Source: RMDB library RFM100, as collected in RNAgym.
An RNA of 177 nucleotides, treated with DMS and read out base by base.
For DMS the reverse transcriptase was MarathonRT.
Reactivities are given for positions 27 through 126.
RNA sequence: GGGAACGACUCGAGUAGAGUCGAAAAAUCCGCUAGGCGGGGCUCUGGCUGGGUACGCUCGGCUUUAGAGCGCGCGGACCCGGCCGAUCCCGCGAGGCGAGGUCGGAUGGUGGUGGUGGCCGUGAUGUCUCGGCCCAAAUUUCGAUUUGGGCCGAGAAAAAGAAACAACAACAACAAC
Reactivity to DMS in 0.01 (KOAc 150mM, MgCl2 10mM, bicine 150mM(pH8.5), 24C), signal-to-noise 1, nucleotides 027 to 126: a030u020c010c000g010c010u000a040g000g020c010g000g030g010g000c230u010c000u010g020g000c000u000g010g030g010u000a020c000g000c000u000c030g040g030c020u000u000u060a180g000a140g040c000g030c300g040c000g000g020a000c000c000c010g010g010c000c000g000a000u000c000c000c000g000c030g000a170g000g000c010g000a050g000g000u020c080g040g000a060u000g010g000u030g000g020u010g030g030u010g000g000c070c060g030u000g000a130u040g000